The record gives the reactivity of an RNA of 207 nucleotides to DMS and 2A3. 2A3 adducts were read by reverse transcription with SuperScript II with manganese. Reactivities are given for positions 27 through 156. It was measured as part of the RMDB library OK3TST. For DMS, 7,851 sequencing reads were counted.
[RMDB]
RNA sequence: GGGAACGACUCGAGUAGAGUCGAAAACUGCCGUCUCAAACGGGGAAGGAGGAUGGCCUCCAGCUCGGCCAGCAGGCCGGCGUUGCGCACCACCGCAGCCACGUCCAGACUCCGGGGGUCCAGCCGGGUGCACACGCUCAGCUCAACCGCCAGGGCGAAUUAUGUUGAUAUUCGUAUCAACAUAAUUAAAAGAAACAACAACAACAAC
Reactivity to DMS in 0.01 (KOAc 150mM, MgCl2 10mM, bicine 150mM(pH8.5), 24C), signal-to-noise 3, nucleotides 027 to 156: c030u000g010c010c010g020u000c030u000c050a050a120a120c040g020g010g020g010a180a110g000g010a120g020g010a130u000g000g030c040c010u010c040c030a130g020c030u010c020g040g020c000c030a190g040c200a140g030g010c000c020g000g000c030g000u000u000g010c010g020c100a070c030c030a080c050c020g020c040a110g010c020c020a070c020g000u000c050c020a220g010a100c010u000c050c030g030g030g020g030g010u010c050c050a090g030c010c010g010g000g030u000g020c060a110c100a060c040g020c010u000c030a070g000c030u000c020a030a090c000c060g040c020c010a100g020g010g040c030g020
Reactivity to 2A3 in 0.01 (KOAc 150mM, MgCl2 10mM, bicine 150mM(pH8.5), 24C), signal-to-noise 4, nucleotides 027 to 156: c040u060g030c030c010g070u040c030u030c100a130a130a050c050g010g000g010g050a040a060g030g040a020g020g040a140u140g090g110c000c010u020c020c010a010g020c050u110c060g010g000c020c020a030g090c090a080g040g040c000c000g010g010c020g040u080u070g000c020g010c020a040c040c010a070c010c050g000c010a010g010c010c010a060c060g080u040c040c030a060g040a140c040u000c090c040g000g040g000g000g000u010c030c020a020g000c030c010g000g000g030u070g010c030a030c010a010c090g010c010u050c050a010g000c010u040c070a050a090c010c040g030c040c040a070g030g000g000c020g010